[RMDB]
RNA sequence: GGGAACGACUCGAGUAGAGUCGAAAAUCGUGCGUGACUCAAUCCGUUUGUGCGUGUGCAGUGUGUGCACCCAGCCGCGCCAUCCGGAUUCAAGUGCACGUCAAAGCAGCACCUUCACAAACGCGCAAUCCGGUGCACCGUUCGCGGUGCACCGGAUAAAAGAAACAACAACAACAAC
Reactivity to 2A3 in 0.01 (KOAc 150mM, MgCl2 10mM, bicine 150mM(pH8.5), 24C), signal-to-noise 1, nucleotides 027 to 126: u130c070g000u020g000c000g020u060g050a000c020u000c050a120a080u050c000c040g000u000u000u030g110u200g030c030g010u030g080u180g000c010a030g080u020g000u010g120u220g300c000a010c000c000c000a020g030c000c000g000c000g000c000c000a000u000c000c040g000g010a010u000u000c040a060a000g000u000g130c000a010c040g040u080c050a120a140a000g100c030a000g000c000a090c000c000u090u070c080a050c040a100a140a040c070g000c000g000c030a000
Structure probing data (2A3) for a 177-nucleotide construct. Reactivities are given for positions 27 through 126. 2A3 adducts were read by reverse transcription with SuperScript II with manganese.